Source information
This 170-nucleotide RNA was probed chemically with DMS and 2A3. It was measured as part of the RMDB library 15KLIB. Reactivities are given for positions 27 through 129. DMS adducts were read by reverse transcription with MarathonRT.
RNA sequence: GGGAACGACUCGAGUAGAGUCGAAAAGAGACCGAGCCCCCUUCGGAAAAGGACCGGAGGAGGGAGCUAGGAGCGUGGGGGGGCCGGUGGAGCCAUGGGAUGCUCCUCCCGAUUCCGUCCAUCCCCCGAGGAUGCAUCUUCGGAUGCAUCAAAAGAAACAACAACAACAAC
Reactivity to DMS in 0.01 (KOAc 150mM, MgCl2 10mM, bicine 150mM(pH8.5), 24C), signal-to-noise 9, nucleotides 027 to 129: g030a120g010a100c000c010g000a110g010c000c000c000c000c000u000u060c050g030g030a040a040a120a110g020g000a100c090c040g040g020a040g000g000a250g000g000g000a060g020c090u070a060g010g010a050g000c060g030u010g040g000g010g000g010g030g030c040c050g000g020u010g000g000a040g010c030c060a120u060g000g020g000a290u040g000c010u010c000c010u030c040c010c000g020a200u020u010c020c020g010u000c000c000a160u010c000c020c000c030c010g010a090g040
Reactivity to 2A3 in 0.01 (KOAc 150mM, MgCl2 10mM, bicine 150mM(pH8.5), 24C), signal-to-noise 9, nucleotides 027 to 129: g100a010g040a010c000c010g010a030g010c000c000c000c010c000u060u120c090g100g050a060a090a060a090g150g040a070c060c100g010g000a010g020g010a120g010g010g010a020g020c030u090a030g010g040a030g030c080g040u210g030g000g000g000g020g010g010c020c010g010g010u050g020g040a030g010c030c030a100u140g070g040g030a080u220g010c010u000c010c000u010c010c000c010g010a020u070u030c010c010g040u000c000c010a040u040c000c000c000c000c000g020a080g110